[RMDB]
RNA sequence: GGGAACGACUCGAGUAGAGUCGAAAACUUUGAACGUUCGCGUUCAAAGAAACCUCUAAGCAGAUUGGCGUGGACGACGCUGCGGAGCGCGUUUGCCAAUAAAAAGCGUAGGCUUCGGCCUACGCAAGGUCAGAGGAUAGUUCGCUAUCCUCUGACCAAAAGAAACAACAACAACAAC
Reactivity to DMS in 0.01 (KOAc 150mM, MgCl2 10mM, bicine 150mM(pH8.5), 24C), signal-to-noise 1, nucleotides 027 to 126: c000u000u010u000g000a020a010c000g030u000u000c180g030c000g000u010u000c000a000a000a030g000a090a100a130c020c010u060c140u000a090a160g000c140a100g000a030u010u000g000g000c000g000u000g000g000a000c060g000a100c010g030c010u000g020c250g010g000a030g020c010g000c010g040u000u000u000g030c000c000a030a000u030a030a050a070a070a100g000c000g020u000a000g000g030c000u000u000c290g010g040c020c000u000a000c000g030c030a000a040
Reactivity to 2A3 in 0.01 (KOAc 150mM, MgCl2 10mM, bicine 150mM(pH8.5), 24C), signal-to-noise 2, nucleotides 027 to 126: c000u020u000u000g000a010a020c000g000u030u060c220g000c000g160u000u000c000a000a020a000g000a040a020a000c030c000u000c090u120a090a190g080c060a040g050a300u010u010g020g000c050g060u180g100g000a000c030g030a100c010g050c020u080g060c060g230g100a040g000c020g000c000g000u000u030u120g000c000c000a020a010u040a040a060a010a020a010g000c000g010u000a000g000g000c000u020u050c140g070g000c010c000u000a000c010g000c000a000a010